[RMDB]
RNA sequence: GGGAACGACUCGAGUAGAGUCGAAAACCGGGGAAUCGUGAACCGGGGGUUCCGACCGGGCCCACAAUGGGAUGAUGACCUUUUGCUUUACUGAACACAUGAUGACCACGCCCUUCGCUGACCUAAAUCCCUCUCACAAGUUCGCUUGUGAGAGGGAAAAAGAAACAACAACAACAAC
Reactivity to 2A3 in 0.01 (KOAc 150mM, MgCl2 10mM, bicine 150mM(pH8.5), 24C), signal-to-noise 2, nucleotides 027 to 126: c000c000g020g000g010g020a140a060u040c050g040u160g020a050a020c020c050g030g070g030g020g040u030u030c000c000g000a000c000c000g000g030g050c010c010c000a030c020a020a100u120g000g070g000a010u070g000a000u050g090a080c000c000u000u040u050u000g040c040u100u060u210a060c030u060g050a100a000c010a000c000a120u090g010a010u020g040a060c010c000a010c020g000c000c010c030u040u050c030g070c030u020g020a030c000c000u050a030a000a000
Reactivity to DMS in 0.01 (KOAc 150mM, MgCl2 10mM, bicine 150mM(pH8.5), 24C), signal-to-noise 1, nucleotides 027 to 126: c000c030g000g040g000g010a130a080u010c010g040u000g000a150a100c070c060g020g000g000g010g040u000u000c030c030g000a100c070c050g000g000g000c000c110c000a120c220a050a090u000g000g020g050a080u030g000a110u020g000a050c060c000u000u000u000u050g000c030u000u010u000a190c140u000g000a180a060c010a130c110a080u010g000a010u000g010a020c030c060a060c130g000c000c000c000u020u040c070g040c050u030g000a050c010c020u030a040a070a220
Chemical mapping of a 177-nucleotide RNA with 2A3 and DMS. The RNA was probed in 150 mM KOAc, 10 mM MgCl2 and 150 mM bicine (pH 8.5) at 24 C. The data come from the RNA Mapping Database (RMDB), library RFM100.